[RMDB]
RNA sequence: GGGAACGACUCGAGUAGAGUCGAAAACUAUUUAUAGACAGAACAGUGGAAAACGUAUAUCGCUAUAAACCUUACACGCCGACUCUUCCAGUCGUACUAUUCCACAUAGGCGAGGCAUAAGCGAAAGGAUAGCACGGUAGUUCGCUACCGUGCUAUCAAAAGAAACAACAACAACAAC
Reactivity to DMS in 0.01 (KOAc 150mM, MgCl2 10mM, bicine 150mM(pH8.5), 24C), signal-to-noise 2, nucleotides 027 to 126: c090u000a060u020u000u010a030u030a000g000a130c100a150g040a010a020c120a050g000u020g000g020a090a060a070a040c080g000u010a210u030a090u040c040g010c060u000a060u000a010a040a200c060c000u000u040a020c190a040c230g020c070c020g010a010c080u000c100u000u010c050c070a080g000u000c060g040u000a170c000u000a120u010u030c070c020a010c130a010u040a030g000g010c030g000a050g060g000c060a130u000a080a060g000c060g000a070a020a200g000
Reactivity to 2A3 in 0.01 (KOAc 150mM, MgCl2 10mM, bicine 150mM(pH8.5), 24C), signal-to-noise 3, nucleotides 027 to 126: c000u020a070u010u140u010a110u140a030g070a020c080a030g050a060a080c030a040g020u070g050g080a040a190a070a000c010g060u030a040u010a070u100c020g000c010u000a000u050a090a030a000c000c000u080u070a090c160a010c050g050c050c040g030a020c020u010c000u070u010c040c020a000g000u020c030g000u000a030c010u050a110u040u010c000c060a090c030a070u050a030g060g000c040g040a070g020g110c050a050u060a160a020g040c070g130a100a060a000g190